[RMDB]
RNA sequence: GGGAACGACUCGAGUAGAGUCGAAAAGAUAUGGAGUACUCAGUUACCACCUUGGAUUUAUGCUCGGAAACGAGCAUUGUCAGGUGAAACUGAGGUACUCCUAAGUCAAAAUCGUCGUUCGCGACGAGGACAGGGAAUUGUUCGCAAUUCCCUGUCCAAAAGAAACAACAACAACAAC
Reactivity to DMS in 0.01 (KOAc 150mM, MgCl2 10mM, bicine 150mM(pH8.5), 24C), signal-to-noise 1, nucleotides 027 to 126: g010a090u030a300u000g000g000a010g000u000a040c010u000c010a030g030u000u000a210c300c010a010c000c010u000u020g050g010a050u000u000u000a010u000g020c000u030c000g000g000a060a120a260c000g000a000g030c000a000u000u000g000u020c010a020g020g000u000g000a050a010a000c000u000g000a000g010g000u000a010c000u000c000c000u010a000a110g000u000c050a130a100a100a290u000c000g000u000c000g070u000u000c300g030c070g030a000c010g010a070
Reactivity to 2A3 in 0.01 (KOAc 150mM, MgCl2 10mM, bicine 150mM(pH8.5), 24C), signal-to-noise 2, nucleotides 027 to 126: g050a000u090a070u180g000g000a000g020u010a010c000u010c010a010g020u020u070a240c120c020a040c020c000u130u240g200g000a070u300u300u200a020u050g000c000u000c020g000g020a100a110a080c010g020a010g000c000a000u020u000g000u050c000a020g020g000u000g060a030a020a000c000u010g000a070g000g010u010a000c000u060c000c000u010a020a030g040u020c000a000a010a010a260u080c030g000u000c000g000u090u130c300g000c020g120a010c020g000a080